[RMDB]
Description
This 177-nucleotide RNA was probed chemically with DMS and 2A3. For DMS, 7,473 sequencing reads were counted.
RNA sequence: GGGAACGACUCGAGUAGAGUCGAAAAUCAAACCCGCCCUUGUAGCUCAGUGGUAGAGCGCUUCACUCGUAUUCCAAUACUGCCAUGAAGAGCUCCGCGGUUCAAUCCCGCGUGGUGGCAAAAAAAAUCAUGUAUUUAAGUUCGCUUAAAUACAUGAAAAAGAAACAACAACAACAAC
Reactivity to DMS in 0.01 (KOAc 150mM, MgCl2 10mM, bicine 150mM(pH8.5), 24C), signal-to-noise 6, nucleotides 027 to 126: u010c150a080a100a150c060c010c010g010c020c020c060u000u010g010u000a040g020c010u000c020a170g010u000g000g010u000a050g010a070g020c050g010c090u000u000c070a080c110u000c080g010u000a100u000u000c060c060a090a100u000a130c040u000g000c020c020a040u000g010a130a110g000a040g010c010u000c050c010g020c000g010g000u000u010c230a100a170u010c300c000c000g000c000g000u000g030g010u000g000g010c050a000a000a000a020a040a040a090a120
Reactivity to 2A3 in 0.01 (KOAc 150mM, MgCl2 10mM, bicine 150mM(pH8.5), 24C), signal-to-noise 5, nucleotides 027 to 126: u080c010a030a010a110c010c000c010g010c010c010c000u080u090g090u140a010g010c000u000c070a040g010u010g010g010u040a020g010a030g050c060g010c030u130u130c050a110c090u080c030g040u080a120u180u060c040c010a050a030u060a280c010u010g010c000c000a030u050g070a160a180g010a020g020c000u000c000c010g000c010g000g000u020u060c020a050a060u070c000c000c000g000c010g000u040g040g050u110g000g000c080a080a000a000a010a000a000a000a070
The reactions ran in a buffer of 150 mM KOAc, 10 mM MgCl2 and 150 mM bicine (pH 8.5), at 24 C.